[RMDB]
RNA sequence: GGGAACGACUCGAGUAGAGUCGAAAAGGUGACCUGGACGGGAAGUAGAUCCAGCGACUGCUUCCGAAGCUUUGAUAAGAGCAACUCCAUCUACGUUGCUCAAGUAGGUGGUAGCAGCAAACACCGAAUCCACUCGAUCGUUCGCGAUCGAGUGGAUAAAAGAAACAACAACAACAAC
Reactivity to 2A3 in 0.01 (KOAc 150mM, MgCl2 10mM, bicine 150mM(pH8.5), 24C), signal-to-noise 2, nucleotides 027 to 126: g030g000u000g030a160c000c000u000g050g030a010c050g010g020g050a060a000g050u140a100g030a110u000c000c020a000g000c000g100a080c050u000g000c000u020u000c000c000g000a090a000g000c000u000u100u120g110a130u200a090a010g000a000g000c040a040a000c000u000c000c000a030u000c040u080a000c080g180u100u110g020c070u090c060a110a000g010u000a030g090g000u040g030g000u000a000g020c000a000g000c070a010a090a030c000a000c000c010g020a000
Reactivity to DMS in 0.01 (KOAc 150mM, MgCl2 10mM, bicine 150mM(pH8.5), 24C), signal-to-noise 1, nucleotides 027 to 126: g020g050u000g000a280c110c020u010g000g010a110c070g090g000g020a200a020g000u020a030g000a250u000c050c020a020g000c210g000a300c020u000g000c000u000u050c000c000g020a300a070g000c000u000u000u000g030a110u020a040a080g010a100g000c000a020a000c000u000c140c020a030u000c020u010a070c090g020u000u000g050c140u000c010a000a040g010u000a020g000g000u000g000g000u000a010g000c000a030g010c050a120a090a010c030a000c000c000g000a240
The record gives the reactivity of an RNA of 177 nucleotides to 2A3 and DMS. It was measured as part of the RMDB library OK1LIB. Conditions: 150 mM KOAc, 10 mM MgCl2 and 150 mM bicine (pH 8.5), 24 C. 2A3 adducts were read by reverse transcription with SuperScript II with manganese.